[RMDB]
RNA sequence: GGGAACGACUCGAGUAGAGUCGAAAAAGAAGUUCUCAGCUAUGAACCACCUGUGGCACCUGAAACAGAAUUUUGAACGACACUUUGCUAGGUAGAUUAUAAUUGUGUGGCUUCUCCCAUAGGUGACAUUAAUUACCAAGAAUUUGCUAAAAGACUCCGUCUAGCUAAUAUUCGUAUUAGCUAGACGAAAAGAAACAACAACAACAAC
Reactivity to DMS in 0.01 (KOAc 150mM, MgCl2 10mM, bicine 150mM(pH8.5), 24C), signal-to-noise 2, nucleotides 027 to 156: a090g000a080a110g020u000u000c010u000c050a180g000c070u020a080u000g020a090a110c020c000a030c010c000u010g020u010g020g020c050a080c070c020u000g030a080a070a200c020a120g000a070a300u000u000u000u010g000a090a100c040g000a180c000a040c040u000u000u010g010c030u000a060g050g000u000a030g010a130u000u000a070u000a020a080u000u030g020u030g030u000g010g030c010u000u020c020u000c020c000c010a130u000a050g010g030u000g010a090c050a090u000u000a070a070u010u000a090c040c010a070a260g000a050a170u000u010u010g000c020u010a140a060a080a140g010a080c010u000c000
Reactivity to 2A3 in 0.01 (KOAc 150mM, MgCl2 10mM, bicine 150mM(pH8.5), 24C), signal-to-noise 4, nucleotides 027 to 156: a010g050a000a020g020u050u000c020u010c020a020g040c050u060a040u130g040a040a050c020c010a010c020c020u030g000u030g020g000c040a060c020c040u040g050a080a090a020c050a040g090a160a100u060u100u140u200g060a080a020c040g040a010c030a010c030u040u090u150g020c030u030a050g000g080u050a050g030a110u050u120a070u130a150a090u100u030g020u010g000u020g070g010c040u060u000c030u030c010c020c000a020u040a020g020g000u020g020a010c000a000u090u110a120a050u110u040a070c030c010a050a020g080a090a120u130u100u160g010c030u110a080a040a010a090g030a050c020u210c220
Chemical mapping of a 207-nucleotide RNA with DMS and 2A3. For 2A3 the reverse transcriptase was SuperScript II with manganese. The RNA was probed in 150 mM KOAc, 10 mM MgCl2 and 150 mM bicine (pH 8.5) at 24 C. Values cover nucleotides 27 to 156. The data come from the RNA Mapping Database (RMDB), library OK3TST.